RNA sequence: GGGAACGACUCGAGUAGAGUCGAAAACAACUACAGCCACUACUACAGGACCAUCGAGGACCUGCGGGACAAGAUUCUUGGUGCCACCAUUGAGAACGCCAGGAUUGUCCUGCAGAUCAACAAUGCUGUGGUAGACACCGUUCGCGGUGUCUACCACAAAAGAAACAACAACAACAAC
Reactivity to 2A3 in 0.01 (KOAc 150mM, MgCl2 10mM, bicine 150mM(pH8.5), 24C), signal-to-noise 1, nucleotides 027 to 126: c070a050a000c000u110a030c030a010g030c000c060a010c000u070a040c000u000a120c060a050g010g000a030c050c050a050u110c020g030a050g160g000a010c010c000u000g040c000g000g000g060a040c000a000a110g080a300u050u060c000u000u030g000g000u000g020c000c100a060c000c000a170u160u280g000a030g000a300a050c080g000c010c000a000g000g000a000u000u000g000u000c050c000u000g000c000a000g000a010u030c000a040a030c000a000a170u090g090c080u050